[RMDB]
RNA sequence: GGGAACGACUCGAGUAGAGUCGAAAAUUUGGGCUGUUCUGGGGGGUCGGAGCGAUGACCGGGCGAUGUCCGACGGUUGCCGUGGUCGGAGCGGGUAUGUCCGGAAUGUGCGUCGCAAUUACGUUGCGGGAAUAGGUUAGUUCGCUAACCUAUUCCCAAAAGAAACAACAACAACAAC
Reactivity to 2A3 in 0.01 (KOAc 150mM, MgCl2 10mM, bicine 150mM(pH8.5), 24C), signal-to-noise 1, nucleotides 027 to 126: u040u040u050g020g000g000c000u040g030u090u060c040u100g030g010g020g010g000g010u020c020g000g000a060g020c000g010a020u070g030a040c000c000g040g000g000c030g040a010u070g100u040c010c020g040a030c020g030g000u060u070g030c000c030g060u040g000g050u060c000g000g030a130g010c010g000g030g030u100a070u050g010u010c020c030g010g050a090a130u250g070u080g070c040g000u010c020g000c040a000a080u080u050a070c160g050u020u050g000c050
Reactivity to DMS in 0.01 (KOAc 150mM, MgCl2 10mM, bicine 150mM(pH8.5), 24C), signal-to-noise 3, nucleotides 027 to 126: u000u010u010g000g000g020c060u000g000u010u000c070u000g010g030g000g020g000g010u010c070g030g000a120g010c010g020a070u000g010a170c020c020g000g010g000c020g020a120u020g000u000c030c010g000a080c050g010g010u000u010g020c050c040g010u010g020g010u000c020g010g000a160g020c050g000g030g020u000a080u010g010u000c010c020g010g000a080a060u000g010u000g010c030g000u000c030g040c030a120a070u020u000a080c160g020u000u000g010c240
An RNA of 177 nucleotides, treated with 2A3 and DMS and read out base by base. Source: RMDB library OK2TRN, as collected in RNAgym. For DMS, 3,038 sequencing reads were counted.